[RMDB]
RNA sequence: GGGAACGACUCGAGUAGAGUCGAAAAGCAUUCCCUGUCGAAAUGCAGAUUAAAUAUGUCAUUAUCACAGGCCAAUGGGAGGUGUUUCACGAAAACCGGGAAAAGCGAAUUUCUGCCUUAUAAACACUAAUUCUUCUGAUUUCGAUCAGAAGAAUUAAAAAGAAACAACAACAACAAC
Reactivity to DMS in 0.01 (KOAc 150mM, MgCl2 10mM, bicine 150mM(pH8.5), 24C), signal-to-noise 7, nucleotides 027 to 126: g020c110a180u010u000c120c000c010u000g010u000c130g010a040a060a030u000g000c020a050g010a120u010u030a070a120a130u040a070u000g000u020c020a030u000u010a100u000c030a060c040a040g000g000c080c090a040a040u010g010g000g010a080g010g010u000g010u000u010u010c060a080c110g000a060a040a090a110c110c020g010g000g000a040a030a070a070g010c050g010a060a100u000u000u000c040u000g010c030c030u010u020a080u020a050a060a070c100a090c150
Reactivity to 2A3 in 0.01 (KOAc 150mM, MgCl2 10mM, bicine 150mM(pH8.5), 24C), signal-to-noise 8, nucleotides 027 to 126: g050c020a050u030u030c000c000c000u020g030u040c070g040a030a030a020u060g000c020a010g050a100u120u240a100a120a060u240a080u120g110u100c010a020u000u110a110u170c010a010c010a040g040g000c020c020a060a060u090g020g000g010a060g000g030u020g020u040u060u060c080a080c050g070a040a030a030a050c020c000g000g000g010a020a110a010a020g080c070g040a030a030u030u040u020c020u030g050c010c000u110u100a150u080a100a110a010c060a000c030
The data come from the RNA Mapping Database (RMDB), libraries RFM100 and RFMREP. An RNA of 177 nucleotides, treated with DMS and 2A3 and read out base by base. DMS adducts were read by reverse transcription with MarathonRT. The RNA was probed in 150 mM KOAc, 10 mM MgCl2 and 150 mM bicine (pH 8.5) at 24 C.